[RMDB]
RNA sequence: GGGAACGACUCGAGUAGAGUCGAAAAGUGUACAGAGGGCGACACCUGCCCAGUGCUGGCACGUGAAGCUGGAGUUCAGUUCAGUGAAGCGCCAGUAAACGGCGGGGGUAACUAUAACCCUCUUAAGCUGAAGUAGUUAGUUCGCUAACUACUUCAGAAAAGAAACAACAACAACAAC
Reactivity to DMS in 0.01 (KOAc 150mM, MgCl2 10mM, bicine 150mM(pH8.5), 24C), signal-to-noise 5, nucleotides 027 to 126: g010u010g020u010a090c280a020g010a020g000g010g020c140g000a050c150a070c010c020u000g000c010c000c060a140g030u010g000c010u000g000g020c010a050c030g000u010g000a150a300g010c000u000g000g000a020g010u010u010c270a130g010u010u000c010a010g020u000g000a190a240g000c030g000c000c000a010g010u000a040a170a180c200g010g010c010g000g000g000g010g010u000a050a120c150u000a110u000a100a140c000c000c000u000c010u000u000a070a230g000
Reactivity to 2A3 in 0.01 (KOAc 150mM, MgCl2 10mM, bicine 150mM(pH8.5), 24C), signal-to-noise 3, nucleotides 027 to 126: g050u030g010u030a060c050a040g000a000g020g020g010c040g020a010c020a010c060c000u000g000c000c000c010a010g010u000g000c000u000g010g000c050a040c210g020u040g010a060a010g000c010u000g010g030a020g040u270u240c090a070g020u020u030c000a010g000u090g120a090a010g000c000g000c000c000a000g000u010a060a140a000c000g000g010c000g000g000g000g010g040u020a020a010c010u030a020u070a290a040c000c000c000u000c000u000u010a040a000g010
Overview
Chemical mapping of a 177-nucleotide RNA with DMS and 2A3. Reactivities are given for positions 27 through 126.